[RMDB]
RNA sequence: GGGAACGACUCGAGUAGAGUCGAAAACCCUUAGCAUUCGUGCUAAGGGAAAUAACGGUGGGCUCAUGCAGCUAGUCGAAAAUGCUGCUCGACCUUUUGGUAAAAUCUGGCCGUUCGCGGCCAGAAAGUAUCAUAUCCUGUUCGCAGGAUAUGAUACAAAAGAAACAACAACAACAAC
Reactivity to DMS in 0.01 (KOAc 150mM, MgCl2 10mM, bicine 150mM(pH8.5), 24C), signal-to-noise 5, nucleotides 027 to 126: c010c000c000u010u000a000g010c000a040u000u010c190g030u000g020c000u000a000a010g000g020g000a010a030a050u010a100a100c080g010g010u000g000g000g000c130u010c060a100u000g010c000a020g010c010u010a190g020u010c190g010a080a110a100a100u010g000c020u000g010c000u000c130g020a050c020c000u000u000u000u000g000g010u010a060a060a080a080u000c000u000g010g000c000c000g020u000u010c160g020c010g010g010c010c000a000g000a000a010a080
Reactivity to 2A3 in 0.01 (KOAc 150mM, MgCl2 10mM, bicine 150mM(pH8.5), 24C), signal-to-noise 6, nucleotides 027 to 126: c000c000c000u010u010a010g010c010a030u010u050c220g090u060g020c010u000a010a000g010g000g030a020a130a020u180a060a010c050g060g030u060g040g030g000c040u010c060a020u100g000c010a010g010c010u050a020g220u190c100g070a040a050a030a060u140g000c000u010g000c010u020c030g060a050c000c000u020u080u080u130g100g020u120a060a050a010a120u030c000u000g000g010c030c010g000u040u040c230g010c010g050g000c010c000a000g000a000a010a000